[RMDB]
RNA sequence: GGGAACGACUCGAGUAGAGUCGAAAAAGACAAGCGGGGAGUACUGUCGCUUUUGCCAUGAUAUUUAUGAGGCCAUCGAUGGAAAGAGGGCCCCUGAAGUUUCAUCGAACGGCGUGGGCAAAGCUGGAAUGACUAAAUCAUUCGUGAUUUAGUCAUUAAAAGAAACAACAACAACAAC
Reactivity to DMS in 0.01 (KOAc 150mM, MgCl2 10mM, bicine 150mM(pH8.5), 24C), signal-to-noise 9, nucleotides 027 to 126: a110g000a090c070a060a090g020c070g010g000g000g010a130g010u010a060c090u000g010u000c100g010c030u000u010u000u000g020c020c010a110u010g000a110u010a080u010u010u010a100u020g010a150g010g010c010c010a080u000c000g000a040u000g000g000a020a050a090g000a150g010g010g010c030c040c070c020u000g010a100a140g000u000u000u000c000a020u000c030g010a040a090c180g020g000c010g020u000g010g010g010c020a030a020a040g010c030u000g010g000
Reactivity to 2A3 in 0.01 (KOAc 150mM, MgCl2 10mM, bicine 150mM(pH8.5), 24C), signal-to-noise 7, nucleotides 027 to 126: a000g060a040c040a040a020g030c030g020g030g010g000a040g040u060a060c040u060g070u160c030g020c000u080u080u080u080g010c000c010a040u100g060a030u060a090u130u240u070a160u190g080a060g060g040c000c010a020u020c010g020a020u020g010g020a020a030a000g040a040g030g040g010c010c000c010c010u040g070a110a030g040u020u030u000c010a020u020c010g010a060a060c080g020g010c030g020u090g010g010g030c030a010a010a010g000c030u030g030g070
An RNA of 177 nucleotides, treated with DMS and 2A3 and read out base by base. 2A3 adducts were read by reverse transcription with SuperScript II with manganese.